Source: RMDB library OK2TST, as collected in RNAgym. An RNA of 177 nucleotides, treated with DMS and 2A3 and read out base by base.
RNA sequence: GGGAACGACUCGAGUAGAGUCGAAAAGCCAUCCACGUAUUUUCCACGUGUCAUUAAUGAGCUGAUUUGCUCGCAGAAAGCGUGUUUGCGAGGAGAAGGAAAAUGCAUACAACGGGUUAUGCCGAUAGUGAUGGACUAAUUUCGAUUAGUCCAUCACAAAAGAAACAACAACAACAAC
Reactivity to DMS in 0.01 (KOAc 150mM, MgCl2 10mM, bicine 150mM(pH8.5), 24C), signal-to-noise 5, nucleotides 027 to 126: g000c030c030a140u010c080c040a120c090g010u000a030u000u000u000u000c090c050a190c100g020u000g010u020c050a100u010u000a100a120u010g010a070g000c030u010g000a130u000u000u000g020c000u010c010g010c090a040g010a030a100a120g010c110g010u000g010u000u000u000g010c020g000a040g020g000a060g010a090a100g000g000a020a010a040a040u000g010c050a080u010a050c130a140a140c140g000g000g020u000u000a070u010g000c010c150g000a110u020a090
Reactivity to 2A3 in 0.01 (KOAc 150mM, MgCl2 10mM, bicine 150mM(pH8.5), 24C), signal-to-noise 5, nucleotides 027 to 126: g050c010c010a010u030c040c010a040c030g010u010a070u030u060u050u050c050c000a040c040g020u050g060u070c040a060u030u250a190a130u140g030a010g050c040u040g080a200u100u110u210g050c010u020c000g000c020a010g100a090a110a030g110c070g060u070g020u070u040u020g000c020g010a020g030g030a060g030a030a120g040g040a030a050a020a030u070g020c010a020u060a110c050a160a040c100g080g000g020u090u020a040u110g100c020c010g040a030u090a040

For DMS the reverse transcriptase was MarathonRT.
The DMS profile rests on 4,897 reads.
High DMS reactivity at an A or C suggests that its Watson-Crick edge is free.
The RNA was probed in 150 mM KOAc, 10 mM MgCl2 and 150 mM bicine (pH 8.5) at 24 C.